[RMDB]
RNA sequence: GGGAACGACUCGAGUAGAGUCGAAAAAGCUCUGGCGUCGAACUUCUUCCACAGGGCCUGCGCCUUCCACGAACGCACCUUGGCCUUUAGCCGUGGGUAGAAGUCGUUCAGAGGCGAGGGUCUCAAAGACCAGCGUACUCUUCGGAGUACGCUGGUCAAAAGAAACAACAACAACAAC
Reactivity to 2A3 in 0.01 (KOAc 150mM, MgCl2 10mM, bicine 150mM(pH8.5), 24C), signal-to-noise 2, nucleotides 027 to 126: a000g050c030u000c010u010g090g030c010g120u000c020g130a090a080c000u080u010c020u050u010c040c000a130c090a140g000g000g000c000c010u220g030c080g030c000c080u150u050c120c090a140c110g010a010a030c000g000c010a060c020c010u100u140g050g000c000c040u220u100u240a000g020c080c050g100u100g000g090g000u040a110g010a070a000g090u210c030g000u000u040c000a000g010a000g020g000c000g000a170g000g040g000u040c080u000c030a030a130a000
Structure probing data (2A3) for a 177-nucleotide construct. Source: RMDB library OK1LIB, as collected in RNAgym.